Background: Chemical mapping of a 207-nucleotide RNA with DMS and 2A3.
RNA sequence: GGGAACGACUCGAGUAGAGUCGAAAACUCGGUCUGAAGCGAUGCAUUGGUUUUGAGCAGAUACCCGCCUGGCGUUACCUCUGUCUCCAAGGUCGCAGGGUCGAUACCGUUGGCAGUGACGACUUUCGGCACGAUCUCUUUGAGCACUUCGGCUGCAAUAUUGCAAUUUGUUCGCAAAUUGCAAUAUAAAAGAAACAACAACAACAAC
Reactivity to DMS in 0.01 (KOAc 150mM, MgCl2 10mM, bicine 150mM(pH8.5), 24C), signal-to-noise 2, nucleotides 027 to 156: c030u010c030g020g020u000c030u010g010a120a070g020c030g000a120u000g000c030a160u000u010g020g020u000u000u000u000g000a130g050c050a120g010a150u000a080c030c020c040g020c080c020u010g020g030c010g020u010u010a040c030c010u000c040u000g010u000c040u010c050c050a100a110g050g010u000c030g010c030a100g020g020g030u000c060g030a120u000a040c010c000g080u010u000g020g010c050a070g000u000g010a140c020g000a070c060u000u000u010c040g020g010c050a080c040g000a050u010c020u000c040u000u010u000g020a120g000c040a050c050u000u010c040g020g020c030u010g020c050a110
Reactivity to 2A3 in 0.01 (KOAc 150mM, MgCl2 10mM, bicine 150mM(pH8.5), 24C), signal-to-noise 5, nucleotides 027 to 156: c020u010c020g000g010u040c020u080g060a100a030g060c020g040a030u110g080c080a210u050u100g030g060u060u090u130u190g060a060g020c030a010g010a050u110a090c020c020c010g090c080c140u110g070g010c060g070u070u090a070c020c040u030c020u030g050u080c020u010c050c010a030a030g020g000u010c000g000c020a050g040g000g010u040c020g010a030u050a070c020c040g040u050u040g050g000c060a060g010u020g090a090c040g030a070c000u080u120u120c060g020g000c030a030c110g030a070u010c040u010c020u080u100u100g040a030g010c020a020c090u040u020c040g030g000c020u020g020c010a020
The data come from the RNA Mapping Database (RMDB), library OK3TST. For 2A3, 4,626 sequencing reads were counted.